[RMDB]
RNA sequence: GGGAACGACUCGAGUAGAGUCGAAAAUAGUCUUAUAGCUGUAUUCCUCCGCAUCUAUAAGACGUGCACUUCAUGCGGUGGAAUACAGGAAGUGCACACGGUGGAGAUGCGAAAGCAUUUCCACCGAGCACCUAGAUGCCUUCGGGCAUCUAGGUGCAAAAGAAACAACAACAACAAC
Reactivity to 2A3 in 0.01 (KOAc 150mM, MgCl2 10mM, bicine 150mM(pH8.5), 24C), signal-to-noise 1, nucleotides 027 to 126: u050a010g040u040c000u000u140a100u140a100g050c000u000g000u090a030u110u000c010c010u030c000c000g000c000a010u040c040u170a150u010a230a050g060a090c010g000u010g010c040a070c030u010u040c000a000u000g000c030g000g000u030g000g030a010a020u080a050c000a000g000g000a070a000g040u010g000c000a010c000a000c040g000g000u000g000g000a030g040a000u000g000c000g160a070a000a140g000c000a000u000u000u000c000c020a000c000c010g000a000
Structure probing data (2A3) for a 177-nucleotide construct. The reactions ran in a buffer of 150 mM KOAc, 10 mM MgCl2 and 150 mM bicine (pH 8.5), at 24 C. Source: RMDB library OK1LIB, as collected in RNAgym. For 2A3, 665 sequencing reads were counted. 2A3 adducts were read by reverse transcription with SuperScript II with manganese.